[RMDB]
RNA sequence: GGGAACGACUCGAGUAGAGUCGAAAACGAAGCGAGGAGGAAAGAAAAGAGAGCAACAGGGCUAGCAGGUGGGAGUUCCUCCCCCCGAGAGGGGACGAGUGAGGCUUAUCCCGGGGAACUCGGCGAAGUUAAAUGAAGAGUUCGCUCUUCAUUUAACAAAAGAAACAACAACAACAAC
Reactivity to DMS in 0.01 (KOAc 150mM, MgCl2 10mM, bicine 150mM(pH8.5), 24C), signal-to-noise 3, nucleotides 027 to 126: c090g020a120a060g010c030g000a070g010g010a080g000g020a050a050a080g010a060a080a100a080g000a100g010a080g000c050a030a070c100a070g010g000g010c060u000a060g010c070a070g020g010u000g010g000g010a060g000u020u000c010c010u000c010c010c010c020c010c020g000a100g000a110g010g010g000g000a060c100g000a040g000u010g010a080g010g010c090u000u000a090u000c050c000c000g000g010g000g000a060a040c080u000c070g010g010c100g010a060a090
Reactivity to 2A3 in 0.01 (KOAc 150mM, MgCl2 10mM, bicine 150mM(pH8.5), 24C), signal-to-noise 1, nucleotides 027 to 126: c020g030a050a010g060c030g040a050g020g000a020g000g040a140a050a050g080a030a110a060a010g070a010g000a000g040c030a030a070c010a060g070g030g030c040u110a030g000c010a000g000g060u090g040g050g000a030g010u100u100c020c010u020c010c010c000c010c000c010g020a040g010a020g010g000g010g010a010c030g010a020g030u130g070a040g010g030c000u070u100a030u090c000c000c020g010g010g010g000a030a000c030u000c040g060g000c030g050a100a020
Structure probing data (DMS and 2A3) for a 177-nucleotide construct. For 2A3, 1,951 sequencing reads were counted. For 2A3 the reverse transcriptase was SuperScript II with manganese. Values are in units of 0.01, from 0 to 300, in steps of 10. The RNA was probed in 150 mM KOAc, 10 mM MgCl2 and 150 mM bicine (pH 8.5) at 24 C.